RNA sequence: GGGAACGACUCGAGUAGAGUCGAAAAGAUAUGGAGCAUUGGGUACUACCCACCGCAGUAUAGGAGGUGCGUCGGAAACGACGCACUACCCACCCUAUAGUGCGAGGUACCCAAUGCUCCUAAGUCAGGUAAUAUCGAUGUUCGCAUCGAUAUUACCAAAAGAAACAACAACAACAAC
Reactivity to DMS in 0.01 (KOAc 150mM, MgCl2 10mM, bicine 150mM(pH8.5), 24C), signal-to-noise 1, nucleotides 027 to 126: g020a060u000a300u000g000g000a000g100c000a040u000u020g020g000g010u000a050c010u010a100c120c050c110a300c110c010g000c000a010g000u000a010u000a000g020g000a110g000g000u000g020c000g000u010c000g000g060a100a020a260c010g050a010c000g030c000a000c020u000a050c060c060c080a300c070c000c000u010a000u010a000g000u010g000c020g020a020g000g000u020a000c000c000c000a020a000u000g020c030u000c020c000u000a000a020g010u000c020a170